[RMDB]
RNA sequence: GGGAACGACUCGAGUAGAGUCGAAAAGAUAUGGAUCCAUACACUCUUGGAUUUAUGUCACGAUCGGAAACGAUCGUGAGCAUUGUCAGAGUGGUGGAUCCUAAGUCAAAAGACGUGUUCGCACGUCCUACAAUGCAUACUUCGGUAUGCAUUGUAGAAAAGAAACAACAACAACAAC
Reactivity to DMS in 0.01 (KOAc 150mM, MgCl2 10mM, bicine 150mM(pH8.5), 24C), signal-to-noise 9, nucleotides 027 to 126: g000a040u010a300u010g010g010a010u000c000c000a000u000a180c000a000c000u000c000u000u010g030g010a030u010u010u000a010u010g020u000c000a010c000g000a010u000c000g020g010a140a090a250c000g010a000u000c000g020u000g000a060g010c010a000u000u000g000u000c030a030g000a010g030u000g010g030u000g010g000a000u000c000c000u000a000a060g010u000c050a100a070a110a150g000a020c010g020u000g000u000u010c260g020c010a010c000g000u000c010
Reactivity to 2A3 in 0.01 (KOAc 150mM, MgCl2 10mM, bicine 150mM(pH8.5), 24C), signal-to-noise 9, nucleotides 027 to 126: g030a010u070a040u170g010g000a000u000c010c000a010u170a300c010a010c010u070c030u110u250g300g040a090u300u300u150a040u060g030u030c000a000c010g000a000u000c010g010g020a070a050a050c020g000a000u000c000g000u000g000a020g010c000a010u020u050g050u070c050a020g000a000g000u000g000g010u000g010g000a000u000c000c000u000a010a010g030u010c040a060a040a020a130g010a000c010g000u020g040u070u120c280g030c130a000c000g000u000c020
This 177-nucleotide RNA was probed chemically with DMS and 2A3. Source: RMDB library TTRDES, as collected in RNAgym. For 2A3, 53,886 sequencing reads were counted.